[RMDB]
RNA sequence: GGGAACGACUCGAGUAGAGUCGAAAAGAUAUGGACACCCAACACUUCAACAGCUCGGAAACGAGACAUGAAGGUUGGUGUCCUAAGUCAAAAGAGCCUGUAAGCUCUUCGGAGCUUACAGGCUCAACCUGAAAGAAUAGUUCGCUAUUCUUUCAGGAAAAGAAACAACAACAACAAC
Reactivity to 2A3 in 0.01 (KOAc 150mM, MgCl2 10mM, bicine 150mM(pH8.5), 24C), signal-to-noise 1, nucleotides 027 to 126: g000a000u060a040u120g020g000a010c010a030c000c100c030a030a030c290a130c010u030u000c010a130a150c000a200g050c000u000c000g050g000a050a090a070c020g010a020g050a110c030a120u130g000a000a000g010g020u000u000g000g000u010g000u000c000c000u000a010a010g000u000c010a020a030a140a170g040a010g010c070c000u060g090u050a000a000g010c030u010c030u060u080c300g050g000a000g000c000u000u030a000c000a020g020g000c010u010c000a020a000
Reactivity to DMS in 0.01 (KOAc 150mM, MgCl2 10mM, bicine 150mM(pH8.5), 24C), signal-to-noise 3, nucleotides 027 to 126: g020a030u000a300u000g000g010a010c000a020c140c020c040a000a010c010a160c000u000u000c010a020a090c260a180g010c000u000c000g010g010a090a080a180c000g010a010g010a040c120a130u010g000a010a010g020g000u010u000g000g010u000g000u000c000c000u000a010a060g000u000c020a070a050a120a130g000a000g030c020c000u000g000u010a030a000g020c000u000c000u000u010c140g020g000a010g010c000u000u000a000c000a000g020g000c010u000c020a010a030
Source: RMDB library TTRDEL, as collected in RNAgym.
An RNA of 177 nucleotides, treated with 2A3 and DMS and read out base by base.
For 2A3, 3,771 sequencing reads were counted.
Conditions: 150 mM KOAc, 10 mM MgCl2 and 150 mM bicine (pH 8.5), 24 C.
DMS adducts were read by reverse transcription with MarathonRT.